Source information: This 177-nucleotide RNA was probed chemically with 2A3 and DMS. For 2A3 the reverse transcriptase was SuperScript II with manganese. Reactivities are given for positions 27 through 126. The RNA was probed in 150 mM KOAc, 10 mM MgCl2 and 150 mM bicine (pH 8.5) at 24 C.
[RMDB]
RNA sequence: GGGAACGACUCGAGUAGAGUCGAAAAUGAUCGAGAGAUCUAACUAUGUACGCGAGUCAAGUGCACAGACUCGAGCGAAAGCUCGGUCGAAAGACCGCGUACAUGUGCCGGCAAGUGUACAGUCGAAGCACGUAAAUGGAUUCGUCCAUUUACGUGCAAAAGAAACAACAACAACAAC
Reactivity to 2A3 in 0.01 (KOAc 150mM, MgCl2 10mM, bicine 150mM(pH8.5), 24C), signal-to-noise 2, nucleotides 027 to 126: u110g020a000u010c020g000a000g010a000g000a060u000c020u010a050a030c050u020a010u030g000u010a000c000g010c010g020a030g020u000c030a170a140g010u050g070c050a010c000a030g010a000c010u040c090g000a000g000c010g070a180a020a000g010c000u000c000g010g020u000c000g000a010a030a010g010a000c000c010g000c000g010u010a000c000a000u000g010u000g070c090c000g020g000c030a190a130g020u020g000u050a030c030a010g010u010c020g030a070a030
Reactivity to DMS in 0.01 (KOAc 150mM, MgCl2 10mM, bicine 150mM(pH8.5), 24C), signal-to-noise 4, nucleotides 027 to 126: u020g020a010u010c000g010a270g010a280g010a000u000c020u010a090a160c090u010a020u000g000u000a000c000g040c000g010a060g010u000c000a050a040g020u000g010c010a010c020a300g000a010c000u010c020g010a020g010c010g000a140a110a190g000c010u000c010g010g000u000c000g000a090a070a130g000a020c010c000g020c000g000u010a000c000a000u000g010u000g010c120c020g000g000c020a030a060g010u000g010u000a030c030a300g010u000c020g000a170a180